[RMDB]
RNA sequence: GGGAACGACUCGAGUAGAGUCGAAAACGGAAUGAAGCAAUAAACAAACAAAUAACAACAACAAAAGACAACCACAUCUACCUGUGUGACAUUAUUUCCUGGAUAUGCAAUGCAAAUGUCAAUAUCACAAAUGGAAUUUAUCCCUUCUCUGCCAUCAUACGAUAGUACGAUUCGUCGUACUAUCGUAAAAAGAAACAACAACAACAAC
Reactivity to DMS in 0.01 (KOAc 150mM, MgCl2 10mM, bicine 150mM(pH8.5), 24C), signal-to-noise 4, nucleotides 027 to 156: c080g010g010a070a080u000g020a080a110g030c060a080a080u000a050a060a140c060a100a090a160c060a060a080a130u000a100a090c050a070a090c060a080a180c090a040a040a080a110g020a090c030a050a130c040c030a040c040a060u000c050u010a100c080c030u010g020u010g020u020g010a110c060a070u010u000a090u000u000u000c010c010u000g020g010a050u000a050u000g030c030a060a050u010g030c090a040a080a090u010g010u010c050a080a090u000a060u000c030a000c070a040a060a090u000g010g010a040a090u000u000u000a070u010c020c010c010u010u000c030u000c060u010g000c010c000a090u000c040a260
Reactivity to 2A3 in 0.01 (KOAc 150mM, MgCl2 10mM, bicine 150mM(pH8.5), 24C), signal-to-noise 9, nucleotides 027 to 156: c050g040g060a060a060u110g030a080a020g060c070a030a100u180a220a080a050c090a040a090a020c040a060a130a040u190a060a050c070a030a010c020a040a010c020a020a130a020a010g050a030c030a040a030c050c020a030c000a040u020c030u060a080c030c030u030g000u010g020u030g060a020c020a060u050u100a050u050u110u020c010c010u020g020g020a030u030a020u060g040c030a040a040u070g030c020a110a050a080u050g040u070c020a030a050u050a030u110c050a030c030a150a090a030u080g030g010a010a010u050u080u050a080u080c020c000c000u050u040c040u010c010u040g070c050c010a060u110c020a020